[RMDB]
The data come from the RNA Mapping Database (RMDB), library RFMREP.
This 177-nucleotide RNA was probed chemically with DMS.
The DMS profile rests on 1,465 reads.
RNA sequence: GGGAACGACUCGAGUAGAGUCGAAAAAGAAAUCAAGAAUGAAGCAAGACAUUGAUUGAUAUGGUUGUUUUCGGUGCAUGUUUGAUUACUAAAAGUUGGGGCAUUCGAUGGUUUACAGAAGUCAUAAGGAAUAUGUUUACUUCGGUAAACAUAUUCCAAAAGAAACAACAACAACAAC
Reactivity to DMS in 0.01 (KOAc 150mM, MgCl2 10mM, bicine 150mM(pH8.5), 24C), signal-to-noise 2, nucleotides 027 to 126: a090g020a120a060a030u000c030a060a040g010a060a030u010g010a070a150g030c090a060a090g010a120c050a040u000u000g000a120u020u000g010a050u010a050u010g010g000u000u010g000u020u000u000u000c010g020g020u000g000c040a030u000g000u000u020u000g010a040u000u000a040c080u010a070a060a060a120g040u000u000g010g010g010g000c040a050u000u010c040g010a070u000g000g010u000u000u010a050c110a080g030a090a090g010u000c040a050u020a070a160